[RMDB]
This 207-nucleotide RNA was probed chemically with 2A3. The reactions ran in a buffer of 150 mM KOAc, 10 mM MgCl2 and 150 mM bicine (pH 8.5), at 24 C. Reactivities are rounded to 0.1 and cut off at 0 and 3. It was measured as part of the RMDB library ARCHII. For 2A3, 353 sequencing reads were counted. For 2A3 the reverse transcriptase was SuperScript II with manganese.
RNA sequence: GGGAACGACUCGAGUAGAGUCGAAAACCGUUUAGGCCGCGGUCAGCGCCGGUUUCCACGCCAGUGUGGGGCUUGAUGCUGUCGCGAAGAGUUCGUCUCUGUUAGCCUGGCAGGGUGUGCUACGCAGGGUCGGGGUGCGGAGGGCAGGGAGAUUAAAGCACUUUAUAGGGUUCGCCCUAUAAAGUGCAAAAGAAACAACAACAACAAC
Reactivity to 2A3 in 0.01 (KOAc 150mM, MgCl2 10mM, bicine 150mM(pH8.5), 24C), signal-to-noise 1, nucleotides 027 to 156: c000c030g060u190u060u050a030g030g010c000c000g060c060g000g000u060c000a000g000c000g050c080c000g080g000u020u050u080c030c000a020c070g140c040c140a090g100u070g000u000g300g000g000g010c020u140u300g040a070u100g080c000u000g000u000c000g000c000g000a020a020g010a000g060u110u060c060g140u000c020u000c000u030g130u140u140a000g000c060c000u000g000g040c150a130g030g220g020u200g000u070g040c000u020a060c070g000c110a030g050g030g090u170c180g030g000g000g110u120g080c040g030g200a080g000g000g040c020a140g000g110g000a000g020a000u120u120a100a000a000